[RMDB]
RNA sequence: GGGAACGACUCGAGUAGAGUCGAAAAGGCAGGAAUAGAAUGGGCCGAAUCUAGUGUUUCACUGCAGGCCAGAUGCUAUUUUUGUUUGGCGCAAGGCCUGGUGGCUGAUGCGGCUGUGUUCUAAAAGCAAUAUUAUAAUUUUCGAAUUAUAAUAUUGAAAAGAAACAACAACAACAAC
Reactivity to DMS in 0.01 (KOAc 150mM, MgCl2 10mM, bicine 150mM(pH8.5), 24C), signal-to-noise 6, nucleotides 027 to 126: g010g000c030a060g010g010a080a100u010a010g010a020a020u000g010g000g010c000c000g010a050a040u010c020u030a010g020u010g000u030u030u060c010a020c030u020g020c050a020g030g010c000c000a050g010a160u020g010c010u000a010u010u010u020u030u040g010u010u020u000g000g000c000g030c080a160a150g000g020c000c010u000g000g020u010g000g000c010u000g010a040u000g000c030g000g000c000u000g010u020g020u000u000c010u000a050a070a040a120g000
Reactivity to 2A3 in 0.01 (KOAc 150mM, MgCl2 10mM, bicine 150mM(pH8.5), 24C), signal-to-noise 4, nucleotides 027 to 126: g060g020c070a020g000g090a040a010u040a040g010a020a010u040g040g010g000c010c000g020a000a000u010c050u080a030g050u030g120u100u180u230c020a010c020u170g040c020a000g000g000c000c000a010g030a040u010g000c000u000a060u040u110u030u090u110g300u090u120u060g010g000c000g000c040a050a040g000g000c050c000u000g010g010u030g020g000c000u020g010a010u040g010c010g010g030c020u070g060u010g000u110u000c010u010a050a020a000a000g000
Record summary: An RNA of 177 nucleotides, treated with DMS and 2A3 and read out base by base. Conditions: 150 mM KOAc, 10 mM MgCl2 and 150 mM bicine (pH 8.5), 24 C. 2A3 adducts were read by reverse transcription with SuperScript II with manganese. DMS adducts were read by reverse transcription with MarathonRT.